[RMDB]
RNA sequence: GGGAACGACUCGAGUAGAGUCGAAAAGAUAUGGAUCUAGCGCUAGCUGUCACAUCGGAAACGAUGUGCCAGCUUGGACCGCUAGAGUCCUAAGUCAAACAGCCCAUAGCUUCGGCUAUGGGCUGAACACAACCUUUUAGUUCGCUAAAAGGUUGUGAAAAGAAACAACAACAACAAC
Reactivity to DMS in 0.01 (KOAc 150mM, MgCl2 10mM, bicine 150mM(pH8.5), 24C), signal-to-noise 7, nucleotides 027 to 126: g000a010u000a010u010g000g000a090u000c000u000a000g000c000g010c010u000a000g030c000u000g000u000c000a010c000a000u000c000g020g010a010a010a030c000g010a000u000g000u000g000c020c000a010g010c000u000u000g000g000a020c300c000g000c000u010a000g000a020g000u010c000c000u010a000a100g000u000c010a060a120a300c010a010g000c000c010c000a010u000a010g010c000u000u010c270g030g000c010u000a000u010g000g010g010c000u000g000a010a070
Reactivity to 2A3 in 0.01 (KOAc 150mM, MgCl2 10mM, bicine 150mM(pH8.5), 24C), signal-to-noise 2, nucleotides 027 to 126: g010a000u020a010u040g000g000a000u010c000u000a010g020c000g000c010u020a040g000c000u010g010u020c010a010c000a000u000c000g000g020a000a010a010c000g000a010u000g000u000g020c000c000a010g070c010u000u020g000g000a000c000c000g000c000u010a000g010a000g000u000c000c010u010a020a000g010u030c030a100a120a180c000a070g000c000c000c000a000u000a000g000c000u060u080c300g130g030c020u000a010u000g000g090g010c000u000g000a000a000
The data come from the RNA Mapping Database (RMDB), library TTRDEL.
The record gives the reactivity of an RNA of 177 nucleotides to DMS and 2A3.
Values cover nucleotides 27 to 126.
Values are in units of 0.01, from 0 to 300, in steps of 10.